This 177-nucleotide RNA was probed chemically with 2A3 and DMS. The RNA was probed in 150 mM KOAc, 10 mM MgCl2 and 150 mM bicine (pH 8.5) at 24 C. The data come from the RNA Mapping Database (RMDB), library OK1LIB. For DMS, 4,680 sequencing reads were counted. For DMS the reverse transcriptase was MarathonRT.
RNA sequence: GGGAACGACUCGAGUAGAGUCGAAAAAUGAUAUGUGCAUCGCAUGUCUGAAAUUCGGUAUAAGUGUCAGUAUUUCCACUCCCCCCGGUAUUGAAAUGGAUUCCGAUAUUGUCGAUGAAGCAAAGAAAGCGUAUAGUCAUUUCGAUGACUAUACGCUAAAAGAAACAACAACAACAAC
Reactivity to 2A3 in 0.01 (KOAc 150mM, MgCl2 10mM, bicine 150mM(pH8.5), 24C), signal-to-noise 4, nucleotides 027 to 126: a000u180g070a010u030a030u130g070u030g030c020a100u110c010g020c020a010u040g010u060c020u020g020a100a110a110u050u050c060g010g100u170a130u030a190a130g050u050g040u110c000a010g030u020a190u030u110u090c050c010a060c080u060c070c010c000c000c000c060g000g010u060a050u060u120g090a030a000a090u140g060g030a050u050u000c000c040g010a010u010a050u070u150g080u060c010g030a040u060g090a080a000g080c080a070a090a000g070a120a150
Reactivity to DMS in 0.01 (KOAc 150mM, MgCl2 10mM, bicine 150mM(pH8.5), 24C), signal-to-noise 3, nucleotides 027 to 126: a080u010g000a070u020a020u010g000u000g010c080a080u010c040g000c050a010u000g010u000c030u000g000a090a070a090u010u020c060g000g010u010a030u010a090a100g000u010g020u010c030a020g000u000a080u000u000u030c050c030a090c110u010c010c010c000c010c020c030g000g020u000a070u010u000g000a030a070a070u010g000g010a120u000u000c020c020g000a070u050a060u020u010g020u020c030g020a070u000g000a070a140g000c110a040a040a090g010a120a110